This 177-nucleotide RNA was probed chemically with 2A3 and DMS. DMS adducts were read by reverse transcription with MarathonRT. Reactivities are given for positions 27 through 126. It was measured as part of the RMDB library OK2TST. Values are in units of 0.01, from 0 to 300, in steps of 10. For DMS, 711 sequencing reads were counted. The RNA was probed in 150 mM KOAc, 10 mM MgCl2 and 150 mM bicine (pH 8.5) at 24 C.
RNA sequence: GGGAACGACUCGAGUAGAGUCGAAAAGACGGCGACAAACCCGUUGACUGGACCCGGAUCCGGCGAAGCGGCAACGAUGGCCGCCGCCAUCGCAUGCUCGGAAGCCGAUUCGACAGCGGCGGCGAGGACCAUGCAGUGACUUCGGUCACUGCAUGGUAAAAGAAACAACAACAACAAC
Reactivity to 2A3 in 0.01 (KOAc 150mM, MgCl2 10mM, bicine 150mM(pH8.5), 24C), signal-to-noise 1, nucleotides 027 to 126: g020a000c010g000g030c010g000a120c240a040a110a020c000c010c010g030u030u060g050a150c020u030g060g190a030c030c100c000g040g000a100u220c230c060g010g030c010g020a160a020g170c060g050g060c040a030a010c020g010a020u010g020g030c080c050g010c010c010g040c000c030a000u000c040g040c040a040u020g000c040u080c130g090g080a000a030g040c040c000g030a040u010u050c000g020a020c010a010g030c000g000g000c000g000g030c000g020a100g000g060
Reactivity to DMS in 0.01 (KOAc 150mM, MgCl2 10mM, bicine 150mM(pH8.5), 24C), signal-to-noise 1, nucleotides 027 to 126: g010a090c050g000g000c070g030a110c080a130a090a200c300c010c010g070u010u000g010a200c120u000g000g000a120c110c100c020g030g000a030u020c090c020g050g050c010g000a300a140g020c110g000g000c000a070a110c020g010a070u000g010g020c000c090g010c080c080g000c000c020a000u010c010g000c050a110u000g000c020u000c010g030g000a130a200g030c030c020g030a070u000u020c020g000a010c080a040g010c050g000g010c010g010g010c100g010a070g010g000